[RMDB]
RNA sequence: GGGAACGACUCGAGUAGAGUCGAAAAUGCAUCUGCUUUGUUACCUCUAUACCAUUGUGUAUAGUACCUUACACUGCAUUGUACUAUUAUGCUACAUUCUAUUUUACUAAUGAGCCUGCAUUUAUUAUAAGUCCUUAGUUCGCUAAGGACAAAAGAAACAACAACAACAAC
Reactivity to 2A3 in 0.01 (KOAc 150mM, MgCl2 10mM, bicine 150mM(pH8.5), 24C), signal-to-noise 9, nucleotides 027 to 129: u040g000c000a030u020c020u080g020c030u060u030u040g030u030u070a060c010c040u030c010u010a010u010a020c020c040a280u160u280g040u040g000u140a000u000a010g010u040a040c000c010u020u040a020c040a030c040u040g010c010a020u030u060g050u040a030c030u040a060u240u040a070u120g010c010u020a070c020a050u040u020c020u100a170u090u150u070u070a110c070u070a050a090u080g010a000g020c010c010u010g010c040a040u050u080u060a120u160u090a120u070a140a030
Reactivity to DMS in 0.01 (KOAc 150mM, MgCl2 10mM, bicine 150mM(pH8.5), 24C), signal-to-noise 9, nucleotides 027 to 129: u030g030c040a010u040c090u000g000c070u000u020u020g010u030u040a060c060c050u040c040u030a000u000a000c010c000a200u020u080g030u000g030u000a000u030a000g040u040a070c080c060u030u000a050c060a050c070u000g020c000a060u030u020g000u000a020c100u000a040u070u020a080u050g030c040u030a060c050a030u030u020c060u000a080u010u070u050u050a060c140u050a050a040u000g000a070g030c050c070u000g030c070a050u010u020u020a060u030u010a110u040a090a130
The record gives the reactivity of an RNA of 170 nucleotides to 2A3 and DMS. It was measured as part of the RMDB library 15KLIB. The reactions ran in a buffer of 150 mM KOAc, 10 mM MgCl2 and 150 mM bicine (pH 8.5), at 24 C. The 2A3 profile rests on 98,233 reads.